[RMDB]
Chemical mapping of a 177-nucleotide RNA with DMS and 2A3. For 2A3 the reverse transcriptase was SuperScript II with manganese. Values are in units of 0.01, from 0 to 300, in steps of 10. For 2A3, 4,318 sequencing reads were counted. Reactivities are given for positions 27 through 126. For DMS, 11,451 sequencing reads were counted.

RNA sequence: GGGAACGACUCGAGUAGAGUCGAAAAUGAUGCUUUGAAGGAUGUAGCUGUUUCAGCGUGCACCUCUGCCCGUGUGGGACAGAAGAGUGAUGUUCUCAGACAUGCUGUGACGCCCUGGGAGCUUGUCUAGAUGGAGAUGUUUCGACAUCUCCAUCUAAAAAGAAACAACAACAACAAC
Reactivity to DMS in 0.01 (KOAc 150mM, MgCl2 10mM, bicine 150mM(pH8.5), 24C), signal-to-noise 5, nucleotides 027 to 126: u010g000a090u000g010c030u000u000u000g010a120a060g010g010a120u000g020u000a110g010c020u010g010u000u000u000c040a040g010c020g020u000g010c020a050c050c040u000c020u000g000c010c010c010g010u010g010u000g030g000g000a040c020a020g010a050a050g000a120g020u000g010a100u000g000u000u000c040u000c060a100g010a170c020a030u000g020c010u000g000u000g010a070c070g000c030c020c020u000g010g000g000a050g010c020u010u000g000u000c080
Reactivity to 2A3 in 0.01 (KOAc 150mM, MgCl2 10mM, bicine 150mM(pH8.5), 24C), signal-to-noise 4, nucleotides 027 to 126: u090g030a020u090g030c020u050u060u110g110a150a040g040g030a070u110g040u210a030g000c070u080g070u040u040u030c010a030g000c010g020u030g010c000a020c000c020u000c030u020g050c040c000c030g100u200g160u300g040g000g050a100c010a010g090a140a000g090a070g050u030g030a110u090g050u150u030c090u000c040a010g020a100c010a040u050g000c010u010g040u050g050a030c050g000c020c010c000u010g010g020g020a020g010c020u070u100g060u080c050